[RMDB]
RNA sequence: GGGAACGACUCGAGUAGAGUCGAAAAGCUUACUCCUAAAACUGGUACAGGUAUAGCUAUAUCUGUUAAACCAGAGAGUACAGCUGAUCAAGAGACUUAUGGUGGAGCUUCAGUGUGUCUCUAUUGCGUACAAGCGUGUUCGCACGCUUGAAAAGAAACAACAACAACAAC
Reactivity to 2A3 in 0.01 (KOAc 150mM, MgCl2 10mM, bicine 150mM(pH8.5), 24C), signal-to-noise 9, nucleotides 027 to 129: g010c000u010u010a010c000u020c030c070u060a090a110a080a120c000u000g020g000u010a010c000a000g000g010u010a010u020a030g190c300u090a020u000a010u010c000u010g020u040u150a090a070a030c010c010a000g010a000g000a010g030u000a010c090a120g000c000u020g000a030u060c030a060a040g020a000g040a080c030u080u100a060u160g060g040u130g040g020a020g040c000u060u060c050a050g030u030g010u010g030u070c010u000c010u050a170u050u180g060c080g020u090a050
Reactivity to DMS in 0.01 (KOAc 150mM, MgCl2 10mM, bicine 150mM(pH8.5), 24C), signal-to-noise 9, nucleotides 027 to 129: g010c020u030u000a020c010u010c000c300u030a080a030a170a260c020u010g000g020u020a050c020a020g030g020u010a010u020a130g020c160u050a070u010a000u030c010u030g030u010u020a020a030a020c000c010a000g000a140g000a000g000u020a000c200a000g020c020u010g020a130u040c120a090a020g010a070g000a020c050u020u030a050u020g040g020u020g000g000a040g010c000u050u000c090a030g000u000g030u030g020u030c000u010c030u000a090u000u000g010c080g050u050a090